An RNA of 207 nucleotides, treated with 2A3 and read out base by base.
The RNA was probed in 150 mM KOAc, 10 mM MgCl2 and 150 mM bicine (pH 8.5) at 24 C.
The 2A3 profile rests on 585 reads.
Source: RMDB library ARCHII, as collected in RNAgym.

[RMDB]
RNA sequence: GGGAACGACUCGAGUAGAGUCGAAAAUUACGACUACGCUCUUGCUGCAUAAGUAAUAGCGUACCUGGCUAUUUAAAUAGCCACGUCAAUCCUGCUGAUGUCUGAUAAGCUGGUGCGGCGACAAUCAUCAGGCUAGCAGCCUAUUGUGUUUACUGGACCUGUUAAUGCCGUUCGCGGCAUUAACAGGAAAAGAAACAACAACAACAAC
Reactivity to 2A3 in 0.01 (KOAc 150mM, MgCl2 10mM, bicine 150mM(pH8.5), 24C), signal-to-noise 1, nucleotides 027 to 156: u140u040a010c040g100a080c030u030a000c020g000c000u070c030u030u010g000c020u050g120c040a130u120a300a000g000u000a000a040u000a030g000c010g000u000a020c000c020u030g000g000c000u000a000u010u180u050a120a300a130u010a010g000c000c000a010c050g000u000c000a000a080u010c030c000u000g000c000u000g020a020u050g010u000c010u000g020a050u030a250a110g000c030u030g000g300u210g120c100g010g000c030g020a030c090a040a170u190c140a000u000c000a000g000g000c040u030a070g160c010a000g020c010c050u160a160u090u070g000u020g020u030u000u020a300c030u000g010g020a000